[RMDB]
RNA sequence: GGGAACGACUCGAGUAGAGUCGAAAAUUUAAUAGCUUGGCUUAUCAGCAAUUGGUCAAUUUAUUGCAAAAUUGUGCAUCAACGGACCCUGUCGCUAGCAGCGUUGUGCAUAGUGGCGAUGUGGUAAGUAUCACCUAUGAUUCGUCAUAGGUGAUACAAAAGAAACAACAACAACAAC
Reactivity to DMS in 0.01 (KOAc 150mM, MgCl2 10mM, bicine 150mM(pH8.5), 24C), signal-to-noise 7, nucleotides 027 to 126: u000u000u010a050a080u000a050g010c080u000u000g010g010c020u000u000a040u000c090a150g010c180a120a110u000u000g010g010u000c030a040a040u010u010u000a030u000u000g010c170a050a110a060a060u010u000g020u010g010c050a050u010c080a050a060c110g010g000a130c090c070c020u000g010u000c060g010c080u000a060g010c050a070g000c090g020u000u010g020u000g010c020a050u000a050g020u000g000g010c080g010a040u000g010u010g010g010u000a050a120
Reactivity to 2A3 in 0.01 (KOAc 150mM, MgCl2 10mM, bicine 150mM(pH8.5), 24C), signal-to-noise 5, nucleotides 027 to 126: u080u050u060a070a040u050a020g020c020u010u050g040g010c010u050u070a030u120c070a060g110c050a040a090u080u040g030g000u040c010a000a020u050u110u110a070u050u120g030c050a030a030a090a230u090u080g050u030g030c020a030u060c020a100a050c020g070g020a050c030c000c000u040g030u030c020g030c090u040a030g020c020a020g030c040g110u130u120g050u080g060c020a050u020a080g030u030g010g000c040g030a050u070g040u100g050g070u030a100a050